[RMDB]
Source information
Structure probing data (2A3 and DMS) for a 207-nucleotide construct. As a SHAPE reagent, 2A3 marks flexible, mostly unpaired nucleotides at the ribose 2'-OH. It was measured as part of the RMDB library OK3TST. High DMS reactivity at an A or C suggests that its Watson-Crick edge is free.

RNA sequence: GGGAACGACUCGAGUAGAGUCGAAAAGGAGGGGCAAAAUCACUGUAUUGGAGCCUGAUGGUAAGAUAACCGUGUUUGAGCAACCUACGGCUGGGUGGAAUAGCGACCCUUGGCUGAGACUCAGCGGUAACUUGGAGGGACGCAUGGUGUACAUUGGAUCACCAUGUUGAUUCGUCAACAUGGUGAUAAAAGAAACAACAACAACAAC
Reactivity to 2A3 in 0.01 (KOAc 150mM, MgCl2 10mM, bicine 150mM(pH8.5), 24C), signal-to-noise 3, nucleotides 027 to 156: g040g010a100g010g000g010g010c080a070a030a020a050u090c050a060c080u090g010u130a130u080u100g090g020a060g030c010c000u070g040a060u070g020g030u080a060a080g010a180u090a090a050c000c020g030u020g080u060u090u130g020a020g000c050a010a090c000c020u090a060c020g020g000c010u030g000g030g010u080g030g050a100a070u100a080g030c020g050a070c010c000c000u030u080g020g000c040u010g000a010g040a100c050u000c050a020g030c030g030g010u010a010a030c040u010u030g060g010a010g030g000g000a010c020g020c000a000u040g040g020u050g010u060a060c080a040u050u160g030g020
Reactivity to DMS in 0.01 (KOAc 150mM, MgCl2 10mM, bicine 150mM(pH8.5), 24C), signal-to-noise 2, nucleotides 027 to 156: g010g000a060g000g010g040g010c050a050a080a050a050u000c040a080c050u000g020u000a130u000u000g020g020a210g010c040c020u020g000a100u010g020g020u000a070a070g020a150u010a070a050c020c010g030u010g010u000u000u000g000a080g020c000a060a080c050c030u000a090c020g020g000c050u000g000g000g050u000g000g000a070a150u010a130g030c080g000a140c030c010c050u010u000g010g000c020u000g000a200g010a080c040u010c010a080g010c010g020g000u000a050a050c080u000u010g020g000a150g000g000g000a100c040g000c040a100u010g020g030u000g040u000a050c050a230u000u000g020g020